[RMDB]
RNA sequence: GGGAACGACUCGAGUAGAGUCGAAAAACAACACGCUUCGGCGUGUUGUCGACGGAGGAAGCUGAGGACGCGCUUGUGCCGCUGCAGGGAAGCGCAGCGUAAAUCAGAGGUGAUUCGUCACCUCUAAGCCUUAGUGCUAUUUCGAUAGCACUAAGGCAAAAGAAACAACAACAACAAC
Reactivity to DMS in 0.01 (KOAc 150mM, MgCl2 10mM, bicine 150mM(pH8.5), 24C), signal-to-noise 4, nucleotides 027 to 126: a010c000a000a000c000a010c000g010c000u010u020c200g020g030c010g050u000g000u000u000g000u000c040g010a080c090g010g020a090g020g000a080a070g010c040u010g000a070g000g010a110c140g000c070g010c030u000u010g040u000g000c070c030g010c030u000g000c040a070g000g000g010a120a090g000c140g010c020a000g020c070g010u010a040a060a080u010c130a020g010a010g000g010u000g000a060u000u010c200g010u000c000a020c000c000u000c010u000a030a070
Reactivity to 2A3 in 0.01 (KOAc 150mM, MgCl2 10mM, bicine 150mM(pH8.5), 24C), signal-to-noise 4, nucleotides 027 to 126: a000c000a000a010c000a010c000g010c020u050u070c230g130g010c000g000u000g000u000u000g000u010c010g030a030c040g020g040a030g020g030a080a020g020c050u030g020a030g060g020a030c020g030c010g020c060u090u100g030u080g060c010c040g020c030u040g000c040a030g050g000g120a060a000g030c020g000c030a010g000c000g030u120a050a060a090u130c070a010g000a000g030g020u030g010a020u030u030c160g040u010c060a000c000c000u000c000u010a030a020